[RMDB]
RNA sequence: GGGAACGACUCGAGUAGAGUCGAAAACACCGGCGCCGGUGGCGAAGGUGGCGAUGCUGGAGCAAGCGGGUCCAUAAACGGCAACGCCGGCGACCCCGGCAACAGCGGAGAACGCGGCGCAGUGGGCAGGUCAGUGCCAAUUCGUUGGCACUGACCUAAAAGAAACAACAACAACAAC
Reactivity to DMS in 0.01 (KOAc 150mM, MgCl2 10mM, bicine 150mM(pH8.5), 24C), signal-to-noise 1, nucleotides 027 to 126: c000a130c000c000g000g000c300g000c010c010g040g000u040g000g000c050g000a090a200g070g030u000g000g000c000g000a260u130g000c000u000g000g000a300g000c060a070a090g110c300g000g000g000u000c000c210a130u030a000a110a300c030g000g000c000a170a220c280g000c000c000g000g000c120g000a130c000c100c070c050g000g030c000a000a260c080a140g010c040g000g000a290g010a030a050c180g010c030g000g010c000g000c050a070g000u080g000g000g010c260
Reactivity to 2A3 in 0.01 (KOAc 150mM, MgCl2 10mM, bicine 150mM(pH8.5), 24C), signal-to-noise 1, nucleotides 027 to 126: c060a000c020c000g120g050c030g050c050c040g220g100u050g040g060c040g080a120a020g140g110u140g050g040c010g000a000u050g000c000u000g050g070a030g080c000a130a060g170c140g000g000g030u030c000c000a040u150a110a290a020c040g000g060c130a200a050c280g000c000c030g000g000c000g000a000c000c000c020c000g030g000c010a020a020c000a030g040c000g000g000a020g000a020a030c150g000c000g090g000c000g000c000a020g100u180g000g000g020c050